[RMDB]
RNA sequence: GGGAACGACUCGAGUAGAGUCGAAAAGAGCGAUUAGACAAAGGGGUAGAGCUACAUAUUAGAUAGCUGUAUAAUCGUUCAAGUUACAUCAAAACAUCUUCAAUAUUUAUUACUUACUUGCCUUUCUGCCAGAGUACGGUAUUCGUACCGUACUCAAGAAGUACAUAGAGUUCGCUCUAUGUACUUCAAAAGAAACAACAACAACAAC
Reactivity to DMS in 0.01 (KOAc 150mM, MgCl2 10mM, bicine 150mM(pH8.5), 24C), signal-to-noise 2, nucleotides 027 to 156: g000a080g030c010g000a040u000u000a030g030a080c070a070a090a130g000g010g060g020u000a080g000a040g040c010u000a050c060a110u000a220u000u020a150g030a200u000a040g030c010u000g000u000a050u010a030a070u010c040g040u000u000c050a070a080g020u010u010a070c050a100u010c090a090a060a130a080c040a080u000c030u000u000c050a040a090u010a060u000u020u000a110u040u000a060c040u010u000a070c050u000u000g000c030c140u000u010u010c030u000g010c080c080a160g010a020g000u000a020c000g020g010u000a050u000u000c300g000u000a010c010c000g000u000a000c010u000c020a020a070
Reactivity to 2A3 in 0.01 (KOAc 150mM, MgCl2 10mM, bicine 150mM(pH8.5), 24C), signal-to-noise 9, nucleotides 027 to 156: g010a000g010c000g010a000u010u010a020g020a080c070a070a100a040g050g010g010g040u060a030g030a010g050c000u020a010c010a080u270a170u200u120a090g170a290u020a010g030c010u000g030u040a040u010a010a010u010c010g000u000u010c010a020a020g030u070u130a070c040a080u120c080a090a100a070a080c020a090u060c060u230u120c070a100a120u080a180u210u210u110a130u110u070a080c030u060u030a030c010u050u080g050c010c030u030u070u050c020u030g060c040c030a030g000a000g010u000a000c000g000g010u000a020u010u060c110g020u010a000c000c000g000u000a010c000u000c000a000a000
Structure probing data (DMS and 2A3) for a 207-nucleotide construct. Conditions: 150 mM KOAc, 10 mM MgCl2 and 150 mM bicine (pH 8.5), 24 C. For DMS the reverse transcriptase was MarathonRT.